[RMDB]
Source: RMDB library RSTRND, as collected in RNAgym.
The record gives the reactivity of an RNA of 207 nucleotides to 2A3 and DMS.

RNA sequence: GGGAACGACUCGAGUAGAGUCGAAAAAUCAGGUUAAUGGCCUCGAGUAUCGUAAUAACCGUGAAGAUUGGGUAAUCCGCAGCCAAGUGCUAAACAAGUAUUGGUAAACUCUACUUGCAUGCUAAUGGUUCACAGACUAAGUGAUGGUUGGGGAGAUUACGGAAUAAAACUUCGGUUUUAUUCCGUAAAAAGAAACAACAACAACAAC
Reactivity to 2A3 in 0.01 (KOAc 150mM, MgCl2 10mM, bicine 150mM(pH8.5), 24C), signal-to-noise 2, nucleotides 027 to 156: a010u120c020a030g010g010u110u130a090a020u110g080g000c020c000u010c010g000a010g000u040a070u130c020g000u000a040a070u090a100a210c070c030g030u060g060a150a140g030a160u110u060g040g000g000u020a030a020u020c040c030g000c110a000g000c000c020a050a020g050u050g010c040u080a060a010a090c010a020a000g050u010a030u030u170g060g020u100a060a090a090c050u030c030u030a000c020u010u000g000c010a030u160g010c010u080a080a030u060g000g000u070u060c040a050c020a040g080a040c030u070a170a050g040u000g060a070u060g050g020u030u060g010g040g040g000a090g010a030u050
Reactivity to DMS in 0.01 (KOAc 150mM, MgCl2 10mM, bicine 150mM(pH8.5), 24C), signal-to-noise 1, nucleotides 027 to 156: a100u020c060a000g000g020u000u000a050a150u020g050g010c020c020u000c100g020a110g060u010a090u000c050g020u000a080a110u000a030a100c030c020g000u000g000a120a040g020a070u010u010g010g040g020u000a070a070u020c000c000g020c000a110g050c000c020a050a100g020u010g010c050u000a070a200a040c020a020a110g000u000a060u000u020g050g020u000a090a100a080c000u020c010u000a020c020u010u000g050c030a300u000g020c000u000a160a210u010g050g000u000u000c040a010c030a040g010a080c120u000a070a140g020u010g010a070u000g020g010u000u010g030g000g020g000a090g010a200u010